RNA sequence: GGGAACGACUCGAGUAGAGUCGAAAAGAAAGAGACACUUCUAAGGAAUAAGGUUCCUGGGCUAAGUAAAUCUAGUUCUGUGGACUGUCUUUCUGCCACCAAGAUCAAAGCUCUGGUUCCUGCCAGACACAGACAAACCCUUCGGGGUUUGUCUGUGAAAAGAAACAACAACAACAAC
Reactivity to 2A3 in 0.01 (KOAc 150mM, MgCl2 10mM, bicine 150mM(pH8.5), 24C), signal-to-noise 2, nucleotides 027 to 126: g030a000a020a010g100a000g020a010c010a000c120u120u000c000u120a090a050g070g030a050a030u170a240a090g060g030u010u000c000c000u000g010g020g000c000u040a150a020g070u080a130a170a100u100c020u000a010g010u010u000c050u000g080u210g010g000a010c010u010g080u010c000u000u040u000c010u020g040c030c010a050c000c020a060a020g040a050u130c090a030a070a090g040c050u000c000u010g040g000u050u150c030c020u000g060c000c000a000g000a010
Reactivity to DMS in 0.01 (KOAc 150mM, MgCl2 10mM, bicine 150mM(pH8.5), 24C), signal-to-noise 2, nucleotides 027 to 126: g020a040a030a000g010a010g020a170c150a120c110u000u000c070u020a090a130g010g000a070a000u040a140a170g000g000u000u000c010c000u000g000g010g020c010u000a020a040g010u010a100a140a140u080c110u000a070g020u000u000c010u010g020u110g000g020a010c050u020g000u010c000u030u000u040c050u010g030c150c030a120c030c040a140a100g000a160u020c140a100a130a120g000c060u020c020u010g000g010u010u010c070c080u020g000c000c000a050g000a170

The record gives the reactivity of an RNA of 177 nucleotides to 2A3 and DMS. Conditions: 150 mM KOAc, 10 mM MgCl2 and 150 mM bicine (pH 8.5), 24 C. 2A3 adducts were read by reverse transcription with SuperScript II with manganese.